[RMDB]
RNA sequence: GGGAACGACUCGAGUAGAGUCGAAAAGUGACUGAAGCCGGCUCGGUUAGAGCAAAAACACAAACGCUAACAAAAUCGUUAGUUUCUCCCGUCAAACAGCACUAGUUGCCGCUUGAUCCUUAAGGAGGCUAACCACGCCAUUCGUGGCGUGGUUAGCAAAAGAAACAACAACAACAAC
Reactivity to 2A3 in 0.01 (KOAc 150mM, MgCl2 10mM, bicine 150mM(pH8.5), 24C), signal-to-noise 1, nucleotides 027 to 126: g000u010g020a150c040u140g110a090a000g040c000c000g000g090c000u000c000g160g000u230u300a000g020a000g040c130a000a000a000a180a000c050a000c060a030a160a020c100g000c000u010a070a000c000a050a110a130a060u200c040g000u090u000a000g000u000u240u000c000u000c000c000c000g000u000c000a040a040a040c000a000g040c010a030c000u100a100g010u270u020g020c040c040g000c000u000u080g000a120u070c000c040u030u120a000a000g050g010a000g040
Conditions: 150 mM KOAc, 10 mM MgCl2 and 150 mM bicine (pH 8.5), 24 C. An RNA of 177 nucleotides, treated with 2A3 and read out base by base. As a SHAPE reagent, 2A3 marks flexible, mostly unpaired nucleotides at the ribose 2'-OH. For 2A3 the reverse transcriptase was SuperScript II with manganese. The data come from the RNA Mapping Database (RMDB), library RFM100.